[RMDB]
RNA sequence: GGGAACGACUCGAGUAGAGUCGAAAAACGGCAACACGUUGGCAGUGGUUUACCUCGGCAAUGAAGGUGGGCCGUGACCAUAUUGCGUCGAUGGUGUACACGCUGGUGUUGUCCUACACCGGUGCCAGACAUUUUUCAAGUUCGCUUGAAAAAUGUCAAAAGAAACAACAACAACAAC
Reactivity to 2A3 in 0.01 (KOAc 150mM, MgCl2 10mM, bicine 150mM(pH8.5), 24C), signal-to-noise 3, nucleotides 027 to 126: a000c030g020g000c000a040a000c010a010c080g090u130u110g080g000c060a100g020u040g050g060u050u060u070a030c000c000u000c000g040g020c040a030a080u110g080a170a080g060g010u020g010g030g020c010c050g030u040g010a020c000c020a020u050a030u170u080g040c050g040u070c050g060a070u140g040g000u040g010u040a040c080a010c040g010c000u020g000g030u000g000u000u020g010u030c020c000u030a020c020a010c010c010g050g070u060g020c030c020a040
Reactivity to DMS in 0.01 (KOAc 150mM, MgCl2 10mM, bicine 150mM(pH8.5), 24C), signal-to-noise 4, nucleotides 027 to 126: a100c180g020g020c020a050a040c050a040c050g000u020u010g020g010c020a110g030u010g010g010u010u000u000a030c030c020u010c020g010g000c080a060a100u000g030a090a080g020g010u000g010g010g020c030c040g010u000g010a060c010c010a070u000a110u000u010g000c110g020u010c030g000a070u010g010g000u000g000u000a130c090a140c030g010c010u000g000g010u000g000u000u000g000u000c020c030u000a110c050a110c020c020g010g020u000g000c060c070a110

The record gives the reactivity of an RNA of 177 nucleotides to 2A3 and DMS. 2A3 adducts were read by reverse transcription with SuperScript II with manganese. The 2A3 profile rests on 4,755 reads.